[RMDB]
The record gives the reactivity of an RNA of 207 nucleotides to 2A3 and DMS. As a SHAPE reagent, 2A3 marks flexible, mostly unpaired nucleotides at the ribose 2'-OH. The DMS profile rests on 3,282 reads. The 2A3 profile rests on 2,991 reads. Source: RMDB library M2RFPK, as collected in RNAgym.
RNA sequence: GGGAACGACUCGAGUAGAGUCGAAAAGUCCCCAGUAUGACGUUAAACUGCUGACUCAUACAUACUGACACCGGUUGCUCAACAGGCUGUGUGGGACGAUAGAAUAACAAGGCUGUCAAUUUGAGCUAAAACUCCUCGGGGUUCGCCCCGAGGAGAAGAUUGUAAAGUUGUUCGCAACUUUACAAUCAAAAGAAACAACAACAACAAC
Reactivity to 2A3 in 0.01 (KOAc 150mM, MgCl2 10mM, bicine 150mM(pH8.5), 24C), signal-to-noise 4, nucleotides 027 to 156: g020u020c010c000c010c000a010g000u030a000u090g010a010c060g020u030u040a050a090a080c040u060g010c030u030g030a020c020u030c030a040u050a120c010a030u100a060c030u080g040a030c030a040c070c030g130g000u110u130g010c020u020c030a050a030c010a070g080g000c020u020g000u020g000u040g070g020g030a010c040g010a020u100a110g090a070a070u100a110a020c040a060a050g070g000c010u030g030u100c020a060a090u050u060u100g020a010g000c030u050a040a100a070a090c000u000c000c000u010c000g000g010g010g000u070u040c120g090c010c000c000c000g000a000g000g000a000g000a010a000
Reactivity to DMS in 0.01 (KOAc 150mM, MgCl2 10mM, bicine 150mM(pH8.5), 24C), signal-to-noise 2, nucleotides 027 to 156: g000u000c010c000c000c000a100g010u000a000u010g010a040c030g020u000u000a010a060a100c020u000g010c010u000g010a250c020u000c020a040u000a080c040a130u000a090c040u000g010a120c050a110c020c050g030g020u000u010g000c020u010c010a090a120c020a090g010g010c030u000g000u000g040u000g030g020g000a090c030g010a140u000a050g000a110a090u020a060a140c080a050a170g000g070c020u000g020u000c000a070a190u000u020u000g000a110g070c030u000a040a050a090a150c000u000c010c010u000c000g010g000g040g020u000u000c260g010c000c010c020c000g020a040g000g020a000g010a010a030